Background
An RNA of 177 nucleotides, treated with 2A3 and read out base by base. For 2A3 the reverse transcriptase was SuperScript II with manganese. It was measured as part of the RMDB library OK1LIB. The RNA was probed in 150 mM KOAc, 10 mM MgCl2 and 150 mM bicine (pH 8.5) at 24 C. Values cover nucleotides 27 to 126.

RNA sequence: GGGAACGACUCGAGUAGAGUCGAAAAGAAACCUCAUAUGUCUUUCCACAUUAAGAAACCUGCCCGUUCUAUUCUUGAAGAAUGGGCUAUGAAGAAUAACAAGAGACUUGACAUUCAUACUGGUGAGACGUCCGUAUUGGUUCGCCAAUACGGACGUAAAAGAAACAACAACAACAAC
Reactivity to 2A3 in 0.01 (KOAc 150mM, MgCl2 10mM, bicine 150mM(pH8.5), 24C), signal-to-noise 1, nucleotides 027 to 126: g000a030a100a000c000c000u080c050a040u030a010u050g040u000c000u100u000u000c000c000a030c030a070u170u110a090a000g090a120a180a060c000c080u040g000c000c010c010g010u050u000c020u040a060u300u030c130u080u050g100a020a000g000a040a000u040g020g000g000c000u000a000u000g000a000a050g030a050a060u090a060a010c050a000a100g090a000g200a180c000u060u060g100a010c000a100u030u100c010a000u080a120c040u040g000g010u020g020a000g000